An RNA of 177 nucleotides, treated with DMS and 2A3 and read out base by base. For DMS the reverse transcriptase was MarathonRT. The 2A3 profile rests on 964 reads.
RNA sequence: GGGAACGACUCGAGUAGAGUCGAAAAUAAGGUAAGAAAGAUAAGACCAGACUGUGAAAUUGUUAAUAAUUUAUCUUUAAUUCGAGGAAAUGUGUUUUCGGAGUUUGGUUAGGAGGGCCGCUCCUUCGUACUCUCUAUGGUUCGCCAUAGAGAGUACAAAAGAAACAACAACAACAAC
Reactivity to DMS in 0.01 (KOAc 150mM, MgCl2 10mM, bicine 150mM(pH8.5), 24C), signal-to-noise 1, nucleotides 027 to 126: u000a130a020g000g040u000a050a080g010a070a100a090g000a080u020a080a110g000a050c020c020a050g000a020c000u000g000u010g010a040a100a100u010u010g000u010u010a060a090u020a090a060u000u000u000a020u040c000u000u000u010a050a140u040u010c140g000a020g010g000a020a030a050u000g000u000g000u000u000u000u010c020g010g000a020g000u000u000u000g010g000u000u000a040g020g000a100g030g010g020c050c010g020c070u020c010c010u000u000c110
Reactivity to 2A3 in 0.01 (KOAc 150mM, MgCl2 10mM, bicine 150mM(pH8.5), 24C), signal-to-noise 2, nucleotides 027 to 126: u090a010a010g030g020u030a030a060g050a100a060a020g040a060u120a070a060g000a030c000c000a010g000a010c020u000g030u050g300a030a050a130u130u100g000u130u180a080a060u200a160a050u240u080u030a110u060c000u050u200u060a220a300u240u140c040g010a000g020g020a030a070a000u030g070u010g060u060u040u010u040c000g000g020a000g010u050u040u060g060g000u010u060a010g020g020a020g020g000g040c040c030g060c010u000c000c000u000u000c050

For DMS, 880 sequencing reads were counted.